[RMDB]
RNA sequence: GGGAACGACUCGAGUAGAGUCGAAAAGAUAUGGACACCUGUAGGGAGCUAAACAUCGGAAACGAUGUCUAGCAUCGAUCUACUGGUGUCCUAAGUCAAAAGCAUAGUGCGUUCGCGCACUAUGCAAGUGUAAAUCAUAGUUCGCUAUGAUUUACACAAAAGAAACAACAACAACAAC
Reactivity to DMS in 0.01 (KOAc 150mM, MgCl2 10mM, bicine 150mM(pH8.5), 24C), signal-to-noise 8, nucleotides 027 to 126: g010a020u000a070u010g010g000a020c010a000c000c000u000g010u000a000g010g010g010a190g020c000u000a010a020a000c000a010u000c000g020g000a020a020a050c000g020a010u000g010u000c030u000a010g010c000a200u000c300g000a120u010c000u000a000c000u000g000g010u000g010u000c000c000u000a000a050g000u000c010a110a090a130a150g000c010a000u000a010g020u000g000c000g020u000u010c290g020c010g010c010a010c000u000a000u000g010c000a010a030
Reactivity to 2A3 in 0.01 (KOAc 150mM, MgCl2 10mM, bicine 150mM(pH8.5), 24C), signal-to-noise 7, nucleotides 027 to 126: g000a000u020a000u050g000g000a000c000a000c010c000u000g000u000a010g040g160g160a160g020c000u010a020a010a000c000a010u000c000g000g000a010a010a000c010g000a000u010g000u000c000u000a000g010c010a030u210c200g140a270u020c000u000a000c000u010g000g010u000g000u000c000c000u000a000a000g000u000c000a000a030a080a060g000c000a000u000a000g000u010g010c010g020u030u090c260g030c000g000c150a000c000u010a000u000g000c000a010a010
An RNA of 177 nucleotides, treated with DMS and 2A3 and read out base by base. The RNA was probed in 150 mM KOAc, 10 mM MgCl2 and 150 mM bicine (pH 8.5) at 24 C. For 2A3, 72,600 sequencing reads were counted. DMS adducts were read by reverse transcription with MarathonRT.